[RMDB]
An RNA of 177 nucleotides, treated with 2A3 and read out base by base. The RNA was probed in 150 mM KOAc, 10 mM MgCl2 and 150 mM bicine (pH 8.5) at 24 C. Source: RMDB library OK1LIB, as collected in RNAgym.
RNA sequence: GGGAACGACUCGAGUAGAGUCGAAAAUGGGAGCCACAAGAAUAGAAGUCGGCCAAAUUUCCACACUAGUGCAUGACUUCACCUUUGCCAUUGUGUCUGAAGAUACAGAUGAGCCUCUCUCACGACAAGCUGAGCAUGGAUUCGUCCAUGCUCAGCUAAAAGAAACAACAACAACAAC
Reactivity to 2A3 in 0.01 (KOAc 150mM, MgCl2 10mM, bicine 150mM(pH8.5), 24C), signal-to-noise 3, nucleotides 027 to 126: u070g010g010g000a060g010c000c070a080c030a080a020g110a060a010u050a180g020a060a010g000u030c000g020g000c030c030a060a090a080u060u110u080c120c030a120c000a020c080u150a090g070u090g300c040a150u160g030a020c000u070u030c010a050c000c010u000u040u110g020c000c020a050u040u070g030u010g010u010c060u060g180a240a060g030a070u090a040c040a010g120a150u050g000a010g020c000c000u020c000u000c000u000c010a090c030g080a030c070a070
For 2A3 the reverse transcriptase was SuperScript II with manganese.